[RMDB]
RNA sequence: GGGAACGACUCGAGUAGAGUCGAAAAAUAUGUGGAUGAGCUAGUUGUGACAACUGACGAUGAGGAAAUCAAGUUCAUCAGCGAAAAAUUCGGAGCAGAAACAAUCAAAAGGGAUGGAAAGGUAGCGAGCGUACCAGUAUUUCGAUACUGGUACGCUAAAAGAAACAACAACAACAAC
Reactivity to 2A3 in 0.01 (KOAc 150mM, MgCl2 10mM, bicine 150mM(pH8.5), 24C), signal-to-noise 3, nucleotides 027 to 126: a000u250a040u220g010u050g050g020a030u000g000a010g070c020u030a060g050u090u040g120u110g100a050c030a080a100c080u080g000a060c040g010a020u010g050a070g080g150a040a110a000u130c060a070a000g020u040u010c000a060u010c010a010g010c050g180a070a000a000a020a050u190u200c100g030g030a040g000c000a010g060a010a070a010c050a050a110u060c030a020a070a050a090g010g060g000a020u070g010g060a070a040a080g020g000u030a010g050c000g060
Reactivity to DMS in 0.01 (KOAc 150mM, MgCl2 10mM, bicine 150mM(pH8.5), 24C), signal-to-noise 3, nucleotides 027 to 126: a050u040a010u030g030u000g020g020a070u000g020a100g000c040u000a050g030u000u000g010u000g020a120c150a020a110c080u000g000a170c150g030a060u000g010a100g030g000a080a100a070u040c090a100a040g030u010u000c030a030u000c020a080g010c100g000a010a070a050a060a100u060u000c000g010g040a050g040c060a070g000a110a040a080c180a080a060u020c080a020a070a060a110g000g020g020a040u040g030g000a020a050a040g000g000u000a070g000c170g010